[RMDB]
The record gives the reactivity of an RNA of 177 nucleotides to 2A3 and DMS. Values cover nucleotides 27 to 126.

RNA sequence: GGGAACGACUCGAGUAGAGUCGAAAAUUCCAUUGACCCACUGCUCGAGGACGUCCUCCCUGUCUCCUCGGUUCUUCUUCGAUCCGGACCGGCUCAUCUCGGCAAGGGGCGGCAGUCCUCAGUACUCCUUAUCGUACAAGUUCGCUUGUACGAUAAGAAAAGAAACAACAACAACAAC
Reactivity to 2A3 in 0.01 (KOAc 150mM, MgCl2 10mM, bicine 150mM(pH8.5), 24C), signal-to-noise 5, nucleotides 027 to 126: u080u020c040c010a040u020u160g110a100c040c030c020a060c060u050g000c010u070c130g000a000g020g000a040c000g040u030c010c000u020c000c000c000u010g010u010c050u020c040c010u060c020g010g010u020u010c010u100u010c010u100u110c100g090a090u030c050c000g000g020a030c010c010g000g000c040u040c090a160u030c070u030c060g000g000c040a050a110g030g010g000g010c030g010g020c020a050g020u010c000c000u010c000a000g000u010a050c030u050c020
Reactivity to DMS in 0.01 (KOAc 150mM, MgCl2 10mM, bicine 150mM(pH8.5), 24C), signal-to-noise 4, nucleotides 027 to 126: u000u010c040c070a150u010u010g000a140c030c020c050a140c170u000g010c000u010c110g020a020g010g000a080c050g020u000c020c000u000c010c010c010u000g000u010c030u000c050c030u000c040g030g010u000u000c010u010u010c150u010u000c160g000a070u000c110c080g010g000a070c050c030g010g000c100u000c100a100u000c070u010c050g010g010c050a070a100g000g000g000g020c160g020g000c060a110g010u010c010c010u020c050a020g010u010a060c110u000c080
Background
The reactions ran in a buffer of 150 mM KOAc, 10 mM MgCl2 and 150 mM bicine (pH 8.5), at 24 C. For DMS the reverse transcriptase was MarathonRT.